[RMDB]
RNA sequence: GGGAACGACUCGAGUAGAGUCGAAAAGGGUGUCUACACUUGCAGGGCCGUUAACCUGAUUGGCUCUGACGAAACCCAAGUGGAACUGCAGUGCCGCAGUGGUGAGCAGAUUGUUACUGUCACCCAGUAGGUUAGCUUCUUUCGAGAAGCUAACCUAAAAAGAAACAACAACAACAAC
Reactivity to 2A3 in 0.01 (KOAc 150mM, MgCl2 10mM, bicine 150mM(pH8.5), 24C), signal-to-noise 1, nucleotides 027 to 126: g010g010g010u030g030u020c030u060a000c030a010c050u040u030g000c100a040g000g000g010c070c000g030u030u040a160a180c030c020u120g110a100u080u300g010g000c000u000c000u020g000a010c050g080a110a100a000c020c010c000a000a010g060u100g030g030a040a020c010u020g000c030a060g070u050g220c060c030g040c040a080g000u100g160g030u020g030a050g020c010a020g020a090u130u090g060u040u160a030c070u020g000u070c000a000c000c000c000a050g150
Reactivity to DMS in 0.01 (KOAc 150mM, MgCl2 10mM, bicine 150mM(pH8.5), 24C), signal-to-noise 3, nucleotides 027 to 126: g000g020g020u000g020u000c090u000a170c050a020c030u000u010g010c040a050g000g000g010c010c020g000u000u000a070a160c180c160u000g010a080u020u000g020g010c010u000c020u000g020a040c090g000a050a100a120c050c070c000a040a030g000u000g000g010a120a110c040u000g010c020a050g000u000g020c110c060g060c150a070g020u020g020g020u000g000a280g000c000a040g000a070u010u000g000u010u020a070c070u000g010u010c020a050c000c000c040a220g010